[RMDB]
Conditions: 150 mM KOAc, 10 mM MgCl2 and 150 mM bicine (pH 8.5), 24 C. This 177-nucleotide RNA was probed chemically with 2A3 and DMS. Reactivities are given for positions 27 through 126. For 2A3 the reverse transcriptase was SuperScript II with manganese. Source: RMDB library OK2TRN, as collected in RNAgym.
RNA sequence: GGGAACGACUCGAGUAGAGUCGAAAAGCGGAGACCCCGGUCCCUGCGCCACAGCGGGCGGCUGGCGGCGGCCAGAGGGAGAAGAAGCGUAGGGCGCAGCUGGACAUCAACGCCUCUGCACAGCCGGCACAAUCUUAGCAUUCGUGCUAAGAUUGUGAAAAGAAACAACAACAACAAC
Reactivity to 2A3 in 0.01 (KOAc 150mM, MgCl2 10mM, bicine 150mM(pH8.5), 24C), signal-to-noise 2, nucleotides 027 to 126: g010c010g020g010a010g010a080c040c010c030c040g040g020u020c020c010c010u000g020c000g020c000c010a070c000a040g000c020g050g090g040c060g050g010c010u020g020g020c050g080g030c110g080g000c010c000a010g050a040g070g090g050a160g050a140a030g050a080a020g010c010g040u190a140g020g040g000c020g000c020a000g010c090u100g000g010a010c000a030u160c010a030a030c050g030c000c000u030c020u010g000c020a030c030a060g090c060c000g080g000
Reactivity to DMS in 0.01 (KOAc 150mM, MgCl2 10mM, bicine 150mM(pH8.5), 24C), signal-to-noise 2, nucleotides 027 to 126: g020c020g010g000a090g010a110c030c050c010c080g010g000u010c010c000c000u000g020c000g000c020c020a060c010a190g000c030g000g000g020c100g020g010c000u000g000g000c020g030g020c250g000g010c000c040a020g010a070g000g000g010a230g000a070a070g000a160a130g000c000g040u030a120g000g000g000c040g020c020a060g000c100u010g020g010a030c030a070u040c100a040a080c120g010c040c010u000c010u000g000c040a160c100a090g010c020c040g040g000